[RMDB]
The data come from the RNA Mapping Database (RMDB), library M2RFPK.
This 207-nucleotide RNA was probed chemically with DMS and 2A3.
As a SHAPE reagent, 2A3 marks flexible, mostly unpaired nucleotides at the ribose 2'-OH.
RNA sequence: GGGAACGACUCGAGUAGAGUCGAAAAGUGGUGCGCGGAGAGGGUAACCACCGGCGGGCGUCACUGAUAUAUCCACCGGGGGGUAAGGGGAGAAAAGGAUACAGCGCGACGAAGUUAGCACGCUGCCGAAAUGUACCCACAUUCGUGUGGGUACAAAAGUAGAAGUAGUGUUCGCACUACUUCUACUAAAAGAAACAACAACAACAAC
Reactivity to DMS in 0.01 (KOAc 150mM, MgCl2 10mM, bicine 150mM(pH8.5), 24C), signal-to-noise 2, nucleotides 027 to 156: g030u000g020g020u000g040c050g010c060g000g010a210g010a170g030g000g010u000a100a110c030c060a060c110c000g000g050c010g030g020g010c090g030u010c050a230c060u000g000a110u000a080u000a100u000c020c000a070c020c020g050g000g000g010g010g030u010a040a050g000g020g000g030a120g010a030a030a040a140g040g010a220u010a050c000a060g000c010g040c030g000a150c040g010a100a160g020u010u000a100g030c010a060c030g000c000u020g000c040c060g010a040a070a110u010g020u000a020c010c020c000a000c010a090u000u000c230g000u000g000u000g000g020g070u000a000c000a000a010a020
Reactivity to 2A3 in 0.01 (KOAc 150mM, MgCl2 10mM, bicine 150mM(pH8.5), 24C), signal-to-noise 2, nucleotides 027 to 156: g100u070g020g040u140g040c090g010c070g040g040a080g010a030g030g030g020u040a080a060c060c050a060c030c050g050g010c030g020g000g020c040g090u140c030a020c040u000g010a010u100a010u010a040u160c020c010a050c090c000g000g000g030g010g000g020u070a100a060g000g010g030g020a050g030a040a070a020a020g000g000a010u030a090c020a000g010c010g020c010g040a060c040g000a140a080g070u070u100a000g040c040a010c080g000c000u030g020c010c010g030a080a040a040u060g010u010a000c000c030c000a010c000a000u010u020c100g030u000g000u000g000g010g000u000a000c000a000a000a000
For DMS the reverse transcriptase was MarathonRT.